[RMDB]
RNA sequence: GGGAACGACUCGAGUAGAGUCGAAAAUCGUCCGCAACGUCGGCGUCGGGACCGAGUCGAGCAAGCACGCCAGCCACGGCUACGUCCGCUACCACGAUGUUCGGGUGCCGGCCGAUCAUGUGCUCGGUCCACCCGAGUGCUUCGGCACUCGGGUGGAAAAAGAAACAACAACAACAAC
Reactivity to 2A3 in 0.01 (KOAc 150mM, MgCl2 10mM, bicine 150mM(pH8.5), 24C), signal-to-noise 1, nucleotides 027 to 126: u080c000g090u100c060c010g020c070a050a030c150g000u010c010g010g040c050g040u130c060g140g000g000a010c000c080g000a010g010u050c010g070a000g060c000a130a000g090c040a010c030g020c000c190a010g120c040c000a050c070g010g040c090u110a010c030g050u040c050c000g000c020u050a000c000c000a060c130g040a000u140g050u110u100c010g000g010g030u050g000c000c130g000g000c070c010g000a010u000c090a070u140g030u000g090c030u000c070g110g080
Structure probing data (2A3) for a 177-nucleotide construct. For 2A3 the reverse transcriptase was SuperScript II with manganese. The data come from the RNA Mapping Database (RMDB), library OK1LIB. Conditions: 150 mM KOAc, 10 mM MgCl2 and 150 mM bicine (pH 8.5), 24 C. Values cover nucleotides 27 to 126. For 2A3, 475 sequencing reads were counted.